[RMDB]
RNA sequence: GGGAACGACUCGAGUAGAGUCGAAAAAGGAGAUUCGUCUCCUAUAUUUAUCUCAUUUAGUUAAUUGUUUAGGCACUUUUAAUUAUAGAGAUAAUUGCGCUUUUUUAAAGUUCGUAUUCGUACGAACGGAACUUAACAUAUUCGUAUGUUAAGUUCCAAAAGAAACAACAACAACAAC
Reactivity to 2A3 in 0.01 (KOAc 150mM, MgCl2 10mM, bicine 150mM(pH8.5), 24C), signal-to-noise 4, nucleotides 027 to 126: a000g010g000a010g000a010u050u080c110g040u000c030u020c010c010u000a020u000a000u040u020u000a010u010c010u000c030a170u080u070u010a000g000u000u000a020a020u010u030g050u110u060u150a190g150g000c050a010c000u040u030u010u040a010a010u030u010a010u060a040g000a000g010a000u010a020a060u090u150g060c100g050c110u100u230u080u010u050u300a180a260a060g000u010u020c000g000u000a020u000u100c190g000u030a010c010g000a010a000c000
Reactivity to DMS in 0.01 (KOAc 150mM, MgCl2 10mM, bicine 150mM(pH8.5), 24C), signal-to-noise 2, nucleotides 027 to 126: a010g000g000a010g020a040u010u020c200g020u000c000u000c000c010u010a050u020a030u010u000u010a000u000c010u000c000a160u010u000u000a010g010u000u010a010a010u010u000g000u000u000u020a170g020g020c150a100c050u000u000u000u000a000a010u000u000a030u000a230g000a020g000a010u000a000a000u000u000g010c180g010c050u000u010u000u010u020u010a040a110a210g010u000u000c000g010u000a020u010u010c190g020u000a010c000g010a020a000c010